[RMDB]
RNA sequence: GGGAACGACUCGAGUAGAGUCGAAAACAAAGGCAUCCGCAUCGAUAUCGAUUUUGACCGCCAUGUCGGGAAUUGAAAGCCGGAUGCGGUUUUCAUUGCCGUGGGGUUGCGAAAGCUCCCGCACGAACCGCCUAAAUUUAUUCGUAAAUUUAGGCGGAAAAGAAACAACAACAACAAC
Reactivity to DMS in 0.01 (KOAc 150mM, MgCl2 10mM, bicine 150mM(pH8.5), 24C), signal-to-noise 3, nucleotides 027 to 126: c040a060a100a160g000g000c020a040u000c000c000g020c040a140u010c030g010a100u010a110u000c020g010a050u000u000u000u000g030a130c090c080g020c130c170a100u000g010u000c010g020g000g000a060a050u010u000g010a030a080a080g030c250c070g020g010a020u000g030c000g010g000u010u000u000u010c080a080u010u010g020c110c000g030u000g010g010g010g010u000u010g010c020g010a090a070a150g000c000u000c030c000c000g020c050a040c050g000a070a200
Reactivity to 2A3 in 0.01 (KOAc 150mM, MgCl2 10mM, bicine 150mM(pH8.5), 24C), signal-to-noise 1, nucleotides 027 to 126: c040a020a100a030g150g000c020a020u040c010c010g030c010a020u010c010g050a040u000a050u100c040g000a030u010u050u040u200g150a100c000c040g030c060c100a060u060g040u060c010g000g030g050a020a080u020u040g040a140a090a020g100c190c050g050g000a040u030g020c000g000g000u020u020u000u040c050a060u000u160g080c010c000g000u000g000g000g050g020u260u070g000c040g040a100a000a000g000c010u000c000c020c020g020c000a000c020g010a030a060

An RNA of 177 nucleotides, treated with DMS and 2A3 and read out base by base. The data come from the RNA Mapping Database (RMDB), library OK2TST. Conditions: 150 mM KOAc, 10 mM MgCl2 and 150 mM bicine (pH 8.5), 24 C. For DMS, 2,263 sequencing reads were counted.